[RMDB]
RNA sequence: GGGAACGACUCGAGUAGAGUCGAAAACAAGGAAGUUUCGACUUCCUUGAAAAACCGUAGGCGAAGAAAUAUACUUUUGACGCACUCGCUUCGAAAGAGGCGGGAGGUGCGAUAAGUCUCGCCUAAACGGAAAAAACCGUUCGUUCGCGAACGGUAAGGUCAUUACUGAGUUCGCUCAGUAAUGACCAAAAGAAACAACAACAACAAC
Reactivity to DMS in 0.01 (KOAc 150mM, MgCl2 10mM, bicine 150mM(pH8.5), 24C), signal-to-noise 1, nucleotides 027 to 156: c000a000a030g020g000a010a020g050u020u000u020c250g030a060c000u000u000c000c000u010u010g010a030a120a000a080a190c000c000g040u000a050g020g000c000g000a080a100g000a030a090a230u000a160u000a150c030u000u000u000u000g000a300c000g030c030a300c020u000c000g000c010u010u000c000g020a150a130a270g000a020g000g080c010g040g000g010a040g030g010u000g000c020g000a100u000a020a050g000u010c090u000c020g000c020c000u000a030a040a100c040g000g000a000a090a100a060a060a040c000c000g000u010u020c010g000u000u000c300g030c080g040a000a010c000g000g000u000a010a080
Reactivity to 2A3 in 0.01 (KOAc 150mM, MgCl2 10mM, bicine 150mM(pH8.5), 24C), signal-to-noise 3, nucleotides 027 to 156: c010a000a000g000g000a010a010g010u030u060u210c170g110a040c000u000u000c000c010u000u000g000a000a000a000a030a000c010c010g000u020a030g000g010c010g040a110a020g090a070a300a010u240a080u080a110c020u090u100u100u170g130a050c000g000c010a010c000u140c000g010c000u010u000c010g100a150a090a080g000a000g000g010c040g040g040g020a100g030g120u120g000c000g020a020u090a030a010g020u000c000u010c020g030c010c000u010a070a040a030c000g000g100a080a060a020a030a020a010c000c000g000u000u000c010g020u020u040c290g000c000g080a000a000c000g000g000u010a020a040